[RMDB]
RNA sequence: GGGAACGACUCGAGUAGAGUCGAAAAGACCCGCAGGCAACCUCAUCAUCAAGCCGUUUUCAUUUAAUUUUCAUGCACAUUUAAUGGCGUCUGUUAUUGGCUUUUAACGAGAUUUUCACUCCACCAAGUUAGCGGACUACUUCGGUAGUCCGCUAACAAAAGAAACAACAACAACAAC
Reactivity to 2A3 in 0.01 (KOAc 150mM, MgCl2 10mM, bicine 150mM(pH8.5), 24C), signal-to-noise 1, nucleotides 027 to 126: g070a080c090c000c000g000c050a030g010g000c010a050a040c010c010u000c040a140u000c000a080u140c110a130a030g010c020c000g020u030u000u010u060c080a080u000u110u130a080a190u080u100u120u160c150a100u110g070c060a080c010a130u090u090u110a150a050u020g060g030c020g000u030c030u020g070u070u000a080u140u100g000g000c000u020u070u040u000a030a050c020g010a050g000a000u050u030u070u030c050a150c060u000c020c000a030c000c000a090a000

Chemical mapping of a 177-nucleotide RNA with 2A3.